[RMDB]
RNA sequence: GGGAACGACUCGAGUAGAGUCGAAAACAAAUAUUAGCAAAAAUAUAUUAGACAAUACUACAAUUAACGAUGAGUGUAGAUGCUGUUAUUUUGAACCACAGAUUAGGAUUCUUGAUAGAGAUGAGAUGCUCAAUGGAUCAUCGUGUGAUAUGAACAGGAUUCGUCCUGAUUUCGAUCAGGACGAAUCAAAAGAAACAACAACAACAAC
Reactivity to 2A3 in 0.01 (KOAc 150mM, MgCl2 10mM, bicine 150mM(pH8.5), 24C), signal-to-noise 2, nucleotides 027 to 156: c010a020a030a090u250a050u140u270a040g040c050a070a120a170a030a030u050a100u030a150u200u120a110g100a180c110a060a190u080a150c050u040a000c010a030a200u130u060a130a130c050g010a020u110g070a040g070u060g010u060a010g000a100u040g030c020u000g000u080u010a150u040u070u050u150g040a020a040c010c000a020c050a070g020a020u050u000a040g020g130a000u060u080c050u060u050g040a080u070a050g050a000g000a020u070g020a010g030a070u170g050c000u010c040a000a070u150g020g010a020u010c000a010u040c050g040u000g020u020g050a040u000a040u180g050a050a000c010a080g030
Notes
The record gives the reactivity of an RNA of 207 nucleotides to 2A3. It was measured as part of the RMDB library OK3TST. Conditions: 150 mM KOAc, 10 mM MgCl2 and 150 mM bicine (pH 8.5), 24 C. For 2A3, 486 sequencing reads were counted.